RNA sequence: GGGAACGACUCGAGUAGAGUCGAAAAGCCAUGAGUCGCAACGCAAAGCCGCGGCAAGUGGAGUUAGCGAGAAGAGACUAGGCUUUGGUUUCUUCAAGUGAAGCCGUCACCAAUCAGGUGUGGUAGUAGGAGCCUGCAUGGUUCGCCAUGCAGGCAAGCAGCAUAAAUUGUUCGCAAUUUAUGCUGCAAAAGAAACAACAACAACAAC
Reactivity to DMS in 0.01 (KOAc 150mM, MgCl2 10mM, bicine 150mM(pH8.5), 24C), signal-to-noise 2, nucleotides 027 to 156: g030c000c000a030u000g010a300g030u000c000g010c000a050a090c030g000c030a190a120a250g040c010c000g020c000g010g010c010a050a300g010u000g010g010a120g010u010u010a210g000c030g000a300g010a060a050g010a070g010a010c010u000a060g050g030c150u000u000u000g010g030u010u000u000c020u010u000c050a070a240g010u000g010a100a140g030c010c020g000u000c020a040c020c000a160a160u000c130a100g040g030u000g010u000g010g030u000a060g020u020a080g010g000a190g030c000c000u000g000c000a020u000g010g030u010u020c300g010c000c010a020u020g000c010a010g020g000c000a000a000
Reactivity to 2A3 in 0.01 (KOAc 150mM, MgCl2 10mM, bicine 150mM(pH8.5), 24C), signal-to-noise 4, nucleotides 027 to 156: g020c000c010a030u080g030a020g030u020c010g010c030a060a090c040g060c140a160a250a060g060c080c080g000c030g020g020c070a040a020g010u010g010g040a100g030u110u140a020g000c010g020a040g020a060a010g030a010g010a020c010u020a040g110g170c030u110u140u100g010g000u010u010u010c010u020u020c010a070a040g020u030g100a040a020g000c000c010g110u110c010a010c020c020a050a230u300c110a110g000g030u030g000u030g030g030u060a080g040u040a040g030g190a030g010c010c000u000g000c000a000u000g000g020u030u020c030g030c090c000a000u000g000c000a000g000g000c000a000a000
Structure probing data (DMS and 2A3) for a 207-nucleotide construct.
The RNA was probed in 150 mM KOAc, 10 mM MgCl2 and 150 mM bicine (pH 8.5) at 24 C.
It was measured as part of the RMDB library M2RFPK.
For 2A3 the reverse transcriptase was SuperScript II with manganese.